[RMDB]
RNA sequence: GGGAACGACUCGAGUAGAGUCGAAAAGAUAUGGAACCAUCGCGCUCGAUAAGCUAUGUGUCGGAAACGACAUUUAGCUUUUGACGAGCGCGAUGGUUCCUAAGUCAAAGCAACGUUCGCGUUGCAACGUCCAUUUUUUGUUCGCAAAAAAUGGACGAAAAGAAACAACAACAACAAC
Reactivity to DMS in 0.01 (KOAc 150mM, MgCl2 10mM, bicine 150mM(pH8.5), 24C), signal-to-noise 2, nucleotides 027 to 126: g000a080u000a300u020g000g000a010a050c000c000a020u000c010g000c000g010c010u000c000g000a140u000a030a000g010c010u000a000u000g000u010g010u000c000g010g000a110a120a190c020g000a030c000a010u000u010u000a010g010c000u000u000u000u010g000a150c140g000a000g000c000g010c000g020a000u000g000g000u000u000c000c000u000a000a060g010u000c010a190a160a190g030c000a000a000c000g030u010u000c180g000c010g000u000u000g000c010a080a160
About this RNA
Conditions: 150 mM KOAc, 10 mM MgCl2 and 150 mM bicine (pH 8.5), 24 C. The record gives the reactivity of an RNA of 177 nucleotides to DMS. The DMS profile rests on 1,693 reads.